[RMDB]
RNA sequence: GGGAACGACUCGAGUAGAGUCGAAAACGGCAGCGCGGGCGCGCGGCGGCUGCCGCGGCGCGGCGCCCGUCCGGGGGCGAUGCGAGGCCGGAGGUGCAGGUCUCCUCGGCGUUCCUGAAGGGCCGCACCUCCGGCACGAAUUCGUUCGUGCCGGAGGAAAAGAAACAACAACAACAAC
Reactivity to DMS in 0.01 (KOAc 150mM, MgCl2 10mM, bicine 150mM(pH8.5), 24C), signal-to-noise 2, nucleotides 027 to 126: c030g010g010c060a050g000c030g020c000g010g020g040c020g040c130g030c010g010g000c010g000g030c280u010g030c030c060g030c020g010g040c020g080c000g010g000c020g000c040c030c030g000u010c020c030g020g010g000g000g010c010g000a050u010g000c090g010a120g000g010c010c010g000g010a020g010g010u000g000c040a100g030g000u000c010u010c020c040u000c040g010g010c160g000u010u000c020c010u000g010a050a030g000g000g010c020c020g010c040a070
Reactivity to 2A3 in 0.01 (KOAc 150mM, MgCl2 10mM, bicine 150mM(pH8.5), 24C), signal-to-noise 1, nucleotides 027 to 126: c000g000g000c080a030g030c070g010c020g060g160g000c090g040c090g090c030g150g000c060g160g180c160u260g030c090c000g050c030g100g080c020g000c020g030g050c000g000c120c000c020g070u030c010c060g130g000g040g000g100c040g000a030u140g050c000g030a110g050g000c050c170g020g010a090g030g060u110g000c010a070g060g020u040c050u060c070c040u030c000g050g000c020g080u140u030c000c010u030g010a040a030g000g010g000c040c040g040c000a010